[RMDB]
RNA sequence: GGGAACGACUCGAGUAGAGUCGAAAAUAGGCCCGUCCCGCCAUGCCGUAAUUGCCCGCGCCAUAGGACGCGCCGAUCAGCAUGGUGAUCUUCGGCACAUUGGCGGUCGCCACCGCCGUCACCAGUACACUAGGCAAAAUUUCGAUUUUGCCUAGUGAAAAGAAACAACAACAACAAC
Reactivity to 2A3 in 0.01 (KOAc 150mM, MgCl2 10mM, bicine 150mM(pH8.5), 24C), signal-to-noise 4, nucleotides 027 to 126: u110a020g010g040c010c000c000g030u050c020c010c010g030c010c010a010u030g000c000c010g120u100a060a110u050u080g020c030c020c020g000c020g010c010c010a220u160a190g070g050a140c030g000c010g000c030c020g010a060u060c030a000g010c010a020u040g000g020u010g010a050u010c060u100u090c070g020g010c050a030c020a230u060u140g010g000c010g000g010u020c060g040c010c020a030c020c010g010c020c000g030u040c020a070c050c000a010g030u050a030
Reactivity to DMS in 0.01 (KOAc 150mM, MgCl2 10mM, bicine 150mM(pH8.5), 24C), signal-to-noise 6, nucleotides 027 to 126: u000a140g010g000c050c020c050g000u010c070c020c010g020c020c010a040u000g010c020c030g000u000a070a050u000u000g010c140c080c040g010c020g020c020c020a180u010a160g020g010a050c040g010c040g030c170c010g010a030u000c040a060g000c040a050u010g020g020u000g000a050u000c060u010u000c140g000g000c080a080c170a110u000u010g020g020c010g000g000u000c080g000c100c050a160c050c020g020c010c010g010u000c060a080c080c030a110g010u010a190